[RMDB]
Record summary: The data come from the RNA Mapping Database (RMDB), library 15KREP. The record gives the reactivity of an RNA of 177 nucleotides to DMS. Values cover nucleotides 27 to 126. For DMS the reverse transcriptase was MarathonRT. The DMS profile rests on 1,160 reads.

RNA sequence: GGGAACGACUCGAGUAGAGUCGAAAAUGGGAUGCCCUUCCCGAUUCCGUCCAUCCCCACCCCCGGGUGUCCCCCCAGGAAUGGCGGGACCCCACUCGACAGGGUCCGCGUACCAUCCUUUCUUACCGUUACACUAUGUCUUCGGACAUAGUGUAACAAAAGAAACAACAACAACAAC
Reactivity to DMS in 0.01 (KOAc 150mM, MgCl2 10mM, bicine 150mM(pH8.5), 24C), signal-to-noise 2, nucleotides 027 to 126: u010g000g010g010a010u000g000c030c020c030u000u010c000c000c000g010a110u000u010c070c040g010u000c020c050a080u000c020c010c010c050a300c030c010c010c020c060g000g000g020u000g010u000c000c000c000c020c010c000a040g010g000a090a050u000g000g000c150g010g000g000a000c000c010c020c050a130c180u010c190g010a180c170a150g000g020g010u000c010c010g030c070g020u010a110c030c010a050u000c030c020u010u000u000c060u000u000a090c230c210